The data come from the RNA Mapping Database (RMDB), library 15KLIB. The record gives the reactivity of an RNA of 170 nucleotides to 2A3 and DMS.
[RMDB]
RNA sequence: GGGAACGACUCGAGUAGAGUCGAAAACUCGGCAAAAGGCGGCAGUCCUCAGUGCUCUUACUCUUUCCUAUAAAGAGGAGACUGCUGGACUCGCCGCCCAAGCCCGAGCAUGGGCCCCAGUUCCGAAUAAGCGGAUUCUUCGGAAUCCGCAAAAGAAACAACAACAACAAC
Reactivity to 2A3 in 0.01 (KOAc 150mM, MgCl2 10mM, bicine 150mM(pH8.5), 24C), signal-to-noise 3, nucleotides 027 to 129: c000u000c000g030g000c000a020a030a040a010g000g000c020g010g010c020a000g030u020c010c020u020c000a030g000u170g210c000u000c010u040u200a220c000u000c010u000u000u040c030c050u170a110u210a280a030a000g000a000g070g000a010g030a000c000u050g060c010u000g000g000a000c000u030c010g010c010c000g000c020c000c000a000a010g000c000c030c020g000a000g000c030a140u090g030g030g020c000c000c000c000a020g040u030u000c060c000g040a130a030u160a130a050
Reactivity to DMS in 0.01 (KOAc 150mM, MgCl2 10mM, bicine 150mM(pH8.5), 24C), signal-to-noise 2, nucleotides 027 to 129: c050u000c000g000g030c000a020a070a150a230g000g010c030g050g010c010a010g020u000c000c050u010c000a050g000u080g060c040u010c050u040u070a300c020u010c000u000u050u010c300c290u060a230u050a070a060a000g010a030g000g000a020g000a010c030u000g000c160u000g000g040a080c000u000c020g110c020c000g060c060c000c000a070a000g000c160c040c060g000a080g000c260a090u030g030g110g060c050c020c000c050a070g010u050u000c010c000g030a050a040u070a110a220

The RNA was probed in 150 mM KOAc, 10 mM MgCl2 and 150 mM bicine (pH 8.5) at 24 C.